[RMDB]
RNA sequence: GGGAACGACUCGAGUAGAGUCGAAAAGCGACCGGCACCAUUGCCGGUAUGGAUGCGAACGAAAUUCAACGGCAAGCACGCAACGCCGUGCGCAAAGGCUCGAUUCUCGAUGUCGACCACAAGGCGGCACUUUGCCGCGUGGCGAUCGGCGAAUCGGCCUUGUUCGGUCGUUCGCGACCGAACAAGGAAAAGAAACAACAACAACAAC
Reactivity to 2A3 in 0.01 (KOAc 150mM, MgCl2 10mM, bicine 150mM(pH8.5), 24C), signal-to-noise 2, nucleotides 027 to 156: g220c060g110a140c000c000g010g000c000a010c020c010a170u080u220g010c020c030g000g000u000a030u010g000g030a000u020g040c040g030a010a000c010g050a160a120a080u180u100c050a070a100c010g000g000c010a100a000g040c020a010c170g000c030a000a180c030g090c130c000g040u060g000c050g000c030a020a040a030g030g000c060u040c180g030a010u020u000c000u000c000g030a020u140g240u200c000g100a260c020c000a000c040a030a110g110g000c000g010g110c030a030c190u190u270u300g000c020c010g090c000g000u000g020g010c030g000a030u030c000g000g040c130g020a010a010u000c000g030g000
Reactivity to DMS in 0.01 (KOAc 150mM, MgCl2 10mM, bicine 150mM(pH8.5), 24C), signal-to-noise 1, nucleotides 027 to 156: g010c090g000a060c000c010g000g020c000a140c060c300a270u000u000g010c040c020g020g040u030a010u000g010g020a160u010g070c010g010a040a100c090g070a040a110a150u000u050c020a090a020c060g010g000c020a160a110g030c090a020c030g080c000a150a170c160g000c050c000g000u000g050c000g000c030a040a010a080g000g030c000u000c020g060a130u000u010c030u010c020g050a130u020g000u000c010g020a100c020c000a080c010a100a100g170g050c020g000g160c010a140c130u020u000u000g000c050c010g020c010g020u000g040g000c030g000a000u010c000g010g020c060g000a100a020u000c010g000g040
About this RNA:
This 207-nucleotide RNA was probed chemically with 2A3 and DMS. It was measured as part of the RMDB library OK3TST. Conditions: 150 mM KOAc, 10 mM MgCl2 and 150 mM bicine (pH 8.5), 24 C.